[RMDB]
RNA sequence: GGGAACGACUCGAGUAGAGUCGAAAAAGCUGGUGCUACGGCACCAGCAGUGGGUAUCUGGAUGUGGUUGGCUCUGGCGGUCCUCUCACAUUUACAUAUUCACAGACGGAGGUGUACGCACCUCCGAUAACUCUAAACUGUUCGCAGUUUAGAGUUAAAAAGAAACAACAACAACAAC
Reactivity to DMS in 0.01 (KOAc 150mM, MgCl2 10mM, bicine 150mM(pH8.5), 24C), signal-to-noise 8, nucleotides 027 to 126: a090g010c000u010g010g020u000g010c010u000a090c220g030g010c000a000c000c000a000g010c000a010g010u000g000g000g000u000a020u000c140u000g000g000a010u010g010u000g000g010u010u000g000g000c140u010c050u020g020g030c160g010g000u000c010c010u000c030u020c010a010c020a020u000u000u000a030c170a020u000a020u000u000c030a020c030a180g010a250c010g010g000a010g000g020u000g010u010a110c210g010c010a010c000c000u000c000c000g010a030
Reactivity to 2A3 in 0.01 (KOAc 150mM, MgCl2 10mM, bicine 150mM(pH8.5), 24C), signal-to-noise 9, nucleotides 027 to 126: a000g000c000u000g000g000u000g010c010u020a090c250g110g000c000a000c000c000a000g000c000a000g000u010g010g000g010u020a020u020c030u030g020g020a010u000g030u010g020g010u040u030g010g000c020u020c080u170g250g040c150g020g020u050c010c000u010c010u050c000a010c000a000u020u020u030a020c010a000u040a020u020u040c020a020c020a040g070a030c040g000g000a000g010g000u010g010u020a040c220g020c080a000c000c000u000c000c000g000a000